[RMDB]
RNA sequence: GGGAACGACUCGAGUAGAGUCGAAAAGCGUUUAUGAGCUACAUGAACGAAGAGCAUACUUAGUCAAAGUAUGCAGAAGCCUUCUGUAGCUCAGAGGGCAGGACUAAUCUUUGACUAAGAUUAGGGAGGACAGCUUUCUAUUCGUAGAAAGCUGUCCAAAAGAAACAACAACAACAAC
Reactivity to DMS in 0.01 (KOAc 150mM, MgCl2 10mM, bicine 150mM(pH8.5), 24C), signal-to-noise 1, nucleotides 027 to 126: g000c070g040u000u000u000a140u020g000a040g040c030u010a050c000a010u010g010a010a020c110g010a060a030g000a300g040c010a010u000a030c000u020u000a080g010u030c260a070a060a000g000u000a010u000g010c010a040g000a130a130g000c050c100u000u000c010u000g000u000a040g010c060u010c020a010g000a060g000g000g000c030a070g060g000a060c040u000a010a020u000c000u000u010u000g030a090c230u010a000a000g000a020u020u030a010g000g040g000a250
An RNA of 177 nucleotides, treated with DMS and read out base by base. DMS adducts were read by reverse transcription with MarathonRT. The data come from the RNA Mapping Database (RMDB), library OK2TRN.